Chemical mapping of a 207-nucleotide RNA with DMS and 2A3. The 2A3 profile rests on 2,360 reads. For DMS the reverse transcriptase was MarathonRT. Conditions: 150 mM KOAc, 10 mM MgCl2 and 150 mM bicine (pH 8.5), 24 C. Source: RMDB library OK3TST, as collected in RNAgym.

[RMDB]
RNA sequence: GGGAACGACUCGAGUAGAGUCGAAAAUACUUACUUAACUGCUCUAUGCCUCUGCUUCCUGGUCUGUAAAAUGAAGAUGAUAAUACUACAUGCCUGUAGUGUUGCUACAACUGUUAGAUGAGUUGGUAAAGUGCUUAGAACAGAGUCUGACUCCUCAAUAAAAUUAGUACUUCGGUACUAAUUUUAUAAAAGAAACAACAACAACAAC
Reactivity to DMS in 0.01 (KOAc 150mM, MgCl2 10mM, bicine 150mM(pH8.5), 24C), signal-to-noise 3, nucleotides 027 to 156: u000a090c080u010u010a060c040u000u010a050a150c020u000g010c020u000c020u000a080u010g010c000c010u000c020u000g010c030u010u000c040c010u000g020g010u000c030u000g030u000a060a050a080a110u000g010a090a140g020a100u000g010a140u010a070a070u000a060c020u020a050c020a080u000g020c170c090u000g040u000a040g010u000g030u000u000g020c020u000a090c030a060a110c040u020g020u000u000a080g020a100u000g020a100g030u000u000g010g000u000a050a060a130g020u000g010c030u000u000a100g010a060a100c020a080g000a120g010u000c030u000g000a150c060u000c030c020u000c040a100
Reactivity to 2A3 in 0.01 (KOAc 150mM, MgCl2 10mM, bicine 150mM(pH8.5), 24C), signal-to-noise 4, nucleotides 027 to 156: u090a010c040u090u030a020c020u130u120a230a060c030u070g020c010u030c030u060a040u110g010c020c020u020c020u040g030c020u040u020c010c020u050g050g030u040c030u030g130u110a050a100a080a110u140g060a050a050g010a070u120g030a040u050a140a030u030a060c000u010a010c000a020u130g140c030c110u030g000u010a040g000u010g030u030u040g010c020u040a040c020a120a050c030u060g050u150u050a050g010a070u070g040a020g040u020u030g000g020u050a070a080a050g060u070g050c010u030u070a000g020a050a020c030a020g020a020g030u010c010u040g030a060c020u030c010c050u090c040a040